RNA sequence: GGGAACGACUCGAGUAGAGUCGAAAAACGGUCGUCUACGGACGACCGAAUGGGAUGAUGACUUUGCCGAGUGCUGAGGAAGUGAUGAGUAAACAGUCGCCUGACACGCCAGCUUACGAGCUGGCGAGUAGUCGAUGGAUUUCGAUCCAUCGACUACAAAAGAAACAACAACAACAAC
Reactivity to 2A3 in 0.01 (KOAc 150mM, MgCl2 10mM, bicine 150mM(pH8.5), 24C), signal-to-noise 5, nucleotides 027 to 126: a000c000g000g000u000c000g000u000c020u040a060c220g100g010a000c000g000a000c010c000g000a010a060u060g020g010g080a050u140g010a060u150g010a040c010u020u030u080g030c010c010g010a020g030u040g010c050u050g030a040g020g090a050a060g050u080g080a080u040g020a030g060u140a050a070a040c030a040g010u010c010g040c020c010u040g020a020c020a000c100g000c000c000a000g000c000u060u040a080c240g060a030g000c000u000g000g000c000g000a000
Reactivity to DMS in 0.01 (KOAc 150mM, MgCl2 10mM, bicine 150mM(pH8.5), 24C), signal-to-noise 2, nucleotides 027 to 126: a130c000g020g020u000c010g000u000c020u020a100c270g010g010a010c000g010a010c000c050g000a010a000u010g000g010g040a060u030g000a150u020g000a020c040u020u000u000g000c030c000g030a050g000u000g020c130u020g000a060g000g000a110a050g020u020g020a070u000g000a060g080u020a050a040a080c150a090g000u010c050g000c030c000u000g000a140c200a120c040g000c020c000a010g010c000u000u020a110c210g010a070g030c000u010g010g050c000g000a030
An RNA of 177 nucleotides, treated with 2A3 and DMS and read out base by base.
DMS (dimethyl sulfate) methylates the pairing face of unpaired adenines and cytosines.
Reactivities are given for positions 27 through 126.
Conditions: 150 mM KOAc, 10 mM MgCl2 and 150 mM bicine (pH 8.5), 24 C.